Conditions: 150 mM KOAc, 10 mM MgCl2 and 150 mM bicine (pH 8.5), 24 C.
An RNA of 177 nucleotides, treated with DMS and 2A3 and read out base by base.
2A3 adducts were read by reverse transcription with SuperScript II with manganese.
Reactivities are given for positions 27 through 126.
The data come from the RNA Mapping Database (RMDB), library RFM100.
For DMS the reverse transcriptase was MarathonRT.
RNA sequence: GGGAACGACUCGAGUAGAGUCGAAAAGCUGUCAUUGUUUCUUCGGUUUUAAUGCUCAGAGUAAGUGGGAGACGCUGAAGACGCCCUUUAGGGGGCGUCCGAGUCAUCAAUGAGACACCACCCUUUGCAGAACGUUAUUCUUCGGAAUAACGUUCUGAAAAGAAACAACAACAACAAC
Reactivity to DMS in 0.01 (KOAc 150mM, MgCl2 10mM, bicine 150mM(pH8.5), 24C), signal-to-noise 3, nucleotides 027 to 126: g000c040u020g000u020c060a290u020u000g050u000u000u000c020u050u010c140g030g020u020u030u030u050a070a080u020g010c010u010c020a020g000a050g020u030a080a060g020u000g010g000g020a290g000a010c020g000c120u030g000a060a060g010a000c010g030c010c000c000u000u010u050a160g010g000g020g000g000c000g040u000c000c020g000a120g000u000c020a110u000c100a100a120u020g000a130g000a110c090a110c030c040a020c000c080c010u000u020u000g000
Reactivity to 2A3 in 0.01 (KOAc 150mM, MgCl2 10mM, bicine 150mM(pH8.5), 24C), signal-to-noise 3, nucleotides 027 to 126: g030c040u050g040u100c060a240u060u030g010u000u020u000c000u000u010c020g030g000u000u020u010u190a090a040u170g010c010u010c030a010g000a040g070u050a200a050g030u070g060g060g020a090g020a020c030g000c140u020g010a030a000g000a010c010g020c010c010c000u000u020u160a270g020g020g000g020g010c000g010u000c000c000g020a010g000u010c020a060u030c060a070a140u100g020a030g020a060c040a060c040c020a020c020c000c000u020u050u030g010